This 177-nucleotide RNA was probed chemically with 2A3. The RNA was probed in 150 mM KOAc, 10 mM MgCl2 and 150 mM bicine (pH 8.5) at 24 C. Reactivities are given for positions 27 through 126. It was measured as part of the RMDB library RFM100.
[RMDB]
RNA sequence: GGGAACGACUCGAGUAGAGUCGAAAAUAAACGUUUCACCGGUUUGUAAAUUGGAACUUCGUAGUUCGCCAGACGCCUUCUUCGUAUCAAGGAACUGGAAAUUGUACGGUGAGUCUGUCAUUUUAUUCGAAUGACGUUGGUUCGCCAACGUCAUUCGAAAAGAAACAACAACAACAAC
Reactivity to 2A3 in 0.01 (KOAc 150mM, MgCl2 10mM, bicine 150mM(pH8.5), 24C), signal-to-noise 1, nucleotides 027 to 126: u300a000a010a000c000g000u080u080u040c000a000c000c000g000g110u000u200u000g120u290a160a100a100u000u070g080g000a000a000c000u000u110c300g120u100a290g000u000u000c000g070c000c000a000g000a000c070g000c000c000u100u040c110u000u010c000g160u180a010u180c000a050a000g000g000a240a120c000u000g000g000a000a000a000u040u030g000u030a000c000g000g000u030g000a000g000u010c110u080g160u150c030a040u000u150u070u120a300u000u000